[RMDB]
RNA sequence: GGGAACGACUCGAGUAGAGUCGAAAAAAAGCUAUCUGCACGCGGCGGUGGAACUGGCGGAAGCGCGCGGUUUGCCCGUCGUGGCGACCAACGACGUGCGCUUUAUCGACAGCAGCGACUUUGACGACGAGUAUUUAUUAUUCGUAAUAAAUACUCGAAAAGAAACAACAACAACAAC
Reactivity to 2A3 in 0.01 (KOAc 150mM, MgCl2 10mM, bicine 150mM(pH8.5), 24C), signal-to-noise 7, nucleotides 027 to 126: a000a000a000g070c040u060a050u060c020u060g020c030a020c070g060c030g060g000c010g020g040u060g040g030a060a080c010u020g030g000c010g010g000a020a010g020c010g000c010g000c010g040g060u040u060u220g060c010c000c000g170u140c070g040u130g000g000c010g010a030c010c030a080a040c100g160a040c090g030u020g010c020g020c000u030u050u040a170u120c030g020a020c030a020g000c010a010g040c020g050a080c040u110u100u130g060a060c060g020a010
Reactivity to DMS in 0.01 (KOAc 150mM, MgCl2 10mM, bicine 150mM(pH8.5), 24C), signal-to-noise 9, nucleotides 027 to 126: a060a050a070g010c040u000a070u010c040u010g010c040a100c080g010c060g000g010c030g000g010u000g010g000a080a110c030u000g000g010c020g010g000a050a030g010c010g020c010g020c020g020g000u000u000u000g030c020c010c020g020u010c250g020u010g010g010c020g010a050c070c070a110a100c170g010a150c120g010u000g010c010g010c020u000u000u000a080u010c040g010a050c050a040g000c070a070g010c050g000a050c060u000u000u000g020a100c130g010a230